RNA sequence: GGGAACGACUCGAGUAGAGUCGAAAACAAGUAGCUGUUGGUAGGCGCGAGAAGCUUUACAUCUUCGGAGACGAUUAUGAUUCCAGAGAUGGUACCCCGAUCAGGGAUUAUAUCCACGUAGUUGAUAAAAUACUAGUGCUUUCGAGCACUAGUAUUUAAAAGAAACAACAACAACAAC
Reactivity to DMS in 0.01 (KOAc 150mM, MgCl2 10mM, bicine 150mM(pH8.5), 24C), signal-to-noise 6, nucleotides 027 to 126: c080a120a120g010u000a070g020c020u000g020u000u000g010g030u000a040g000g010c040g010c060g010a100g010a070a100g000c070u000u010u010a080c030a040u000c020u000u010c060g010g010a060g010a060c050g010a140u020u020a070u020g010a100u000u000c010c020a060g000a020g000a040u010g010g020u010a140c080c010c010c040g010a070u010c180a120g010g000g000a040u000u000a050u010a300u010c010c040a050c140g010u010a070g010u000u000g000a070u000a060
Reactivity to 2A3 in 0.01 (KOAc 150mM, MgCl2 10mM, bicine 150mM(pH8.5), 24C), signal-to-noise 2, nucleotides 027 to 126: c020a010a060g080u050a000g050c040u020g020u050u080g020g060u050a050g040g000c020g000c010g010a050g020a160a010g020c000u100u070u040a010c000a010u030c000u050u050c010g030g000a060g020a040c060g010a030u090u190a100u300g000a060u080u040c000c010a010g010a000g000a050u030g020g040u070a080c010c030c010c020g020a070u070c030a040g040g020g000a000u070u060a060u030a010u080c010c020a040c080g070u080a110g020u040u160g060a140u130a060